[RMDB]
RNA sequence: GGGAACGACUCGAGUAGAGUCGAAAAUGGCUGGGUGACUGGCUGCCGGAGGUUCUGUCGGUUGCGGGGCUGCCCGGUCAAAGAAGUUUGUCGAGGGAGACACCGAUGGCUGCAACGGCGGUGGUCGCAUAGGCCUGCACUUCGGUGCAGGCCUAUGAAAAGAAACAACAACAACAAC
Reactivity to 2A3 in 0.01 (KOAc 150mM, MgCl2 10mM, bicine 150mM(pH8.5), 24C), signal-to-noise 1, nucleotides 027 to 126: u080g040g010c020u010g080g020g020u050g010a030c070u100g300g000c000u010g000c000c010g000g000a080g000g200u210u160c030u070g050u050c020g000g020u040u050g080c060g000g050g100g090c030u010g000c050c000c010g000g000u000c000a000a000a000g000a030a000g180u030u210u200g050u100c040g050a180g000g010g000a010g020a050c000a000c020c000g050a090u090g010g000c120u060g000c030a110a100c090g030g030c000g000g000u020g000g010u060c020g000
Reactivity to DMS in 0.01 (KOAc 150mM, MgCl2 10mM, bicine 150mM(pH8.5), 24C), signal-to-noise 1, nucleotides 027 to 126: u030g030g040c000u000g000g000g050u000g010a090c010u000g000g000c000u030g010c000c020g090g020a120g020g020u070u010c040u050g040u000c000g020g030u010u020g020c000g020g000g000g020c070u020g040c000c020c010g040g110u000c000a000a040a050g030a140a110g000u020u010u030g040u010c000g030a230g000g000g000a090g030a100c140a030c030c010g000a070u030g000g060c060u030g000c070a140a100c120g000g030c020g000g030u000g050g000u000c010g010
About this RNA
Chemical mapping of a 177-nucleotide RNA with 2A3 and DMS. The RNA was probed in 150 mM KOAc, 10 mM MgCl2 and 150 mM bicine (pH 8.5) at 24 C. DMS adducts were read by reverse transcription with MarathonRT. For 2A3, 441 sequencing reads were counted.